Overview:
An RNA of 177 nucleotides, treated with DMS and 2A3 and read out base by base. For DMS, 1,230 sequencing reads were counted. DMS adducts were read by reverse transcription with MarathonRT. The 2A3 profile rests on 936 reads. The data come from the RNA Mapping Database (RMDB), library OK2TST.

RNA sequence: GGGAACGACUCGAGUAGAGUCGAAAAGUUCGACCGAUCGACUCGACGAACAGCGUGUCGCCGGUCAGCAGGGCCUCGUCUUCGACGAGGUAGGAGGUCAUGCCGGUGGUGUGGCCCGGCGUAUGAACACCGAGUCACCAUUCGUGGUGACUCGGUGAAAAGAAACAACAACAACAAC
Reactivity to DMS in 0.01 (KOAc 150mM, MgCl2 10mM, bicine 150mM(pH8.5), 24C), signal-to-noise 1, nucleotides 027 to 126: g010u000u000c090g040a040c010c020g000a090u030c040g010a010c020u000c020g000a110c050g010a110a110c200a190g030c020g000u000g000u000c010g010c300c010g000g000u010c000a080g000c030a170g030g000g000c000c020u010c020g010u000c010u020u000c200g010a000c030g000a020g000g010u000a010g020g000a140g030g010u000c000a040u000g000c000c000g040g010u010g020g070u000g030u000g000g000c060c010c000g010g040c070g000u010a000u010g000a070a210
Reactivity to 2A3 in 0.01 (KOAc 150mM, MgCl2 10mM, bicine 150mM(pH8.5), 24C), signal-to-noise 1, nucleotides 027 to 126: g030u020u100c070g000a030c000c040g010a090u120c030g010a000c000u090c020g160a180c040g060a300a050c070a140g060c010g030u040g000u000c010g000c020c000g010g000u010c020a000g010c010a010g100g130g000c010c000u000c000g020u000c020u300u180c260g010a000c020g010a000g000g020u000a010g000g030a170g030g010u020c040a030u060g000c000c000g200g170u240g020g090u130g040u080g080g050c000c000c020g010g030c090g020u170a080u190g050a010a000